[RMDB]
RNA sequence: GGGAACGACUCGAGUAGAGUCGAAAAACACGGAACUUCGGUUCCGUGUAUAGGGACGAAAUAACACGAUAGCGCUUGUCGCCCGACCAAAAAGGCGGAAAAACUGCAUCCUCUUCGGAGGAUGCAACCAUAGCGUACAUUUCGAUGUACGCUAUGGAAAAGAAACAACAACAACAAC
Reactivity to DMS in 0.01 (KOAc 150mM, MgCl2 10mM, bicine 150mM(pH8.5), 24C), signal-to-noise 5, nucleotides 027 to 126: a050c010a010c000g000g000a010a000c000u000u000c150g010g020u000u000c000c000g010u000g000u000a020u000a090g010g000g000a140c060g010a090a080a110u000a070a050c110a200c070g000a050u000a060g010c040g000c040u000u000g000u000c040g010c020c010c000g010a160c050c040a050a050a030a080a060g010g020c020g010g010a050a050a030a040a120c240u000g000c010a000u000c000c000u010c000u000u000c180g030g010a010g000g010a000u000g000c000a000a030
Reactivity to 2A3 in 0.01 (KOAc 150mM, MgCl2 10mM, bicine 150mM(pH8.5), 24C), signal-to-noise 6, nucleotides 027 to 126: a000c000a000c000g000g000a010a000c000u060u100c230g080g000u010u000c000c000g000u000g000u000a010u040a000g020g010g020a020c060g130a090a080a130u180a120a050c060a010c090g060a040u060a050g070c020g010c030u030u050g030u040c000g030c030c000c010g050a080c020c020a050a060a030a020a040g030g000c030g040g040a020a080a030a010a020c070u030g000c000a000u000c000c000u030c010u030u080c210g040g000a000g000g010a000u000g000c000a000a000

The record gives the reactivity of an RNA of 177 nucleotides to DMS and 2A3. 2A3 adducts were read by reverse transcription with SuperScript II with manganese. DMS adducts were read by reverse transcription with MarathonRT. Values cover nucleotides 27 to 126.